The data come from the RNA Mapping Database (RMDB), library M2PK50. Structure probing data (DMS and 2A3) for a 177-nucleotide construct. For 2A3 the reverse transcriptase was SuperScript II with manganese. For DMS, 24,767 sequencing reads were counted.
[RMDB]
RNA sequence: GGGAACGACUCGAGUAGAGUCGAAAACAUGGAGUCUUCGGACUCCAUGCACUACCGAAAUAAUGCCUCGGUAUAAAAGGCAAAGCCUUGGAAACAAGGGAACGAUGUCACGAUUCGUCGUGACAAACGUAAGGAAAAGAUUCGUCUUUUCCUUACGAAAAGAAACAACAACAACAAC
Reactivity to DMS in 0.01 (KOAc 150mM, MgCl2 10mM, bicine 150mM(pH8.5), 24C), signal-to-noise 9, nucleotides 027 to 126: c010a000u000g010g010a010g010u000c000u000u010c190g030g010a010c000u000c000c000a000u000g010c060a180c040u000a040c000c000g010a090a110a100u010a080a140u000g000c010c000u000c000g000g000u000a110u010a020a030a050a040g000g010c010a040a080a170g010c010c000u000u000g000g000a160a100a200c010a010a010g010g000g020a090a090c190g000a150u000g000u000c000a010c000g010a040u000u000c200g010u000c000g020u000g000a010c000a010a030a120
Reactivity to 2A3 in 0.01 (KOAc 150mM, MgCl2 10mM, bicine 150mM(pH8.5), 24C), signal-to-noise 9, nucleotides 027 to 126: c000a000u000g010g000a010g000u010c020u060u070c290g080g010a000c000u000c000c000a000u000g000c010a030c020u030a010c000c000g030a040a050a070u180a060a050u070g000c000c000u010c010g000g000u050a040u130a230a060a010a010g000g000c000a030a030a060g090c000c000u010u010g010g010a040a030a030c010a000a010g000g010g020a040a040c070g110a110u090g000u000c000a000c000g010a010u040u060c200g050u010c000g000u090g000a000c000a010a010a000